[RMDB]
RNA sequence: GGGAACGACUCGAGUAGAGUCGAAAAAUUCUGUACAUAAAAGUCGAAAGUAUUGCUAUAGUUAAGGUUGCGCUUGCCUAUUUAGGCAUACUUCUCAGGAUGGCGCGUUGCCGUCCAACAAGAUCCAAAAACAACGGCCACUUCGGUGGCCGUUGAACAUUGGACUAUUCUUCGGAAUAGUCCAAUGAAAAGAAACAACAACAACAAC
Reactivity to 2A3 in 0.01 (KOAc 150mM, MgCl2 10mM, bicine 150mM(pH8.5), 24C), signal-to-noise 2, nucleotides 027 to 156: a010u070u030c010u010g080u110a050c030a020u220a070a110a110a070g080u100c110g060a040a000a000g000u010a020u050u180g040c010u090a070u120a070g060u030u090a070a000g000g070u080u110g070c070g010c060u000u050g000c000c010u020a060u020u090u060a010g000g000c000a000u010a000c020u020u080c030u000c070a000g000g000a000u000g000g000c020g020c020g150u030u210g000c000c000g000u000c010c000a030a020c010a000a000g040a060u120c080c030a000a090a000a000a000c000a000a000c000g020g040c030c000a030c030u040u030c110g030g000u060g000g080c050c000g020u000u000g000a000a000
Reactivity to DMS in 0.01 (KOAc 150mM, MgCl2 10mM, bicine 150mM(pH8.5), 24C), signal-to-noise 1, nucleotides 027 to 156: a030u020u010c010u000g040u010a100c040a160u000a100a080a100a120g010u010c030g020a150a000a150g040u010a070u000u000g010c040u000a150u010a170g010u000u000a060a090g010g010u000u000g000c150g040c060u000u000g010c040c000u000a160u000u000u000a100g050g030c000a050u000a080c040u010u010c030u000c030a300g000g020a080u000g000g030c060g020c220g010u000u010g080c000c030g030u000c010c010a030a080c110a090a090g010a040u000c030c030a000a050a010a100a080c010a010a030c010g000g040c020c030a000c000u000u010c290g050g090u010g020g040c000c000g020u010u000g000a020a130